Structure probing data (DMS and 2A3) for a 177-nucleotide construct. DMS (dimethyl sulfate) methylates the pairing face of unpaired adenines and cytosines. For 2A3 the reverse transcriptase was SuperScript II with manganese. The RNA was probed in 150 mM KOAc, 10 mM MgCl2 and 150 mM bicine (pH 8.5) at 24 C. DMS adducts were read by reverse transcription with MarathonRT.
[RMDB]
RNA sequence: GGGAACGACUCGAGUAGAGUCGAAAACAUAGCACGAUUGGAGGCUUUGGAAUUUGAGUCUCGGUGAAUCAAAGUUCUUUGGUCUUGUGAAUCCACGUGCAACUAAAAGGAGUGCUAACAGUGACUUAUGAGCGUUGAAAUUCGUUUCAACGCUCAUAAAAGAAACAACAACAACAAC
Reactivity to DMS in 0.01 (KOAc 150mM, MgCl2 10mM, bicine 150mM(pH8.5), 24C), signal-to-noise 1, nucleotides 027 to 126: c060a180u080a120g000c000a020c020g000a200u000u010g040g040a020g060g070c000u010u010u000g000g050a000a060u000u000u000g010a090g000u000c030u030c230g000g090u040g000a020a060u000c080a000a020a050g000u050u000c000u000u000u000g000g000u000c020u010u010g010u020g060a120a090u020c040c000a140c070g090u010g000c050a170a180c190u050a040a130a160a120g020g020a020g010u020g020c040u000a040a020c100a130g000u000g000a100c100u000u000
Reactivity to 2A3 in 0.01 (KOAc 150mM, MgCl2 10mM, bicine 150mM(pH8.5), 24C), signal-to-noise 2, nucleotides 027 to 126: c050a030u170a020g010c000a000c030g020a090u050u030g030g060a010g000g000c000u010u010u020g000g000a010a030u060u000u000g000a050g090u010c050u010c160g230g090u280g010a050a050u020c010a020a000a030g160u060u070c000u000u030u000g000g000u000c000u010u180g110u150g210a140a090u020c010c000a030c100g030u110g010c030a030a020c090u130a040a000a000a050g130g000a130g000u050g030c000u000a050a020c060a070g030u030g070a020c000u000u020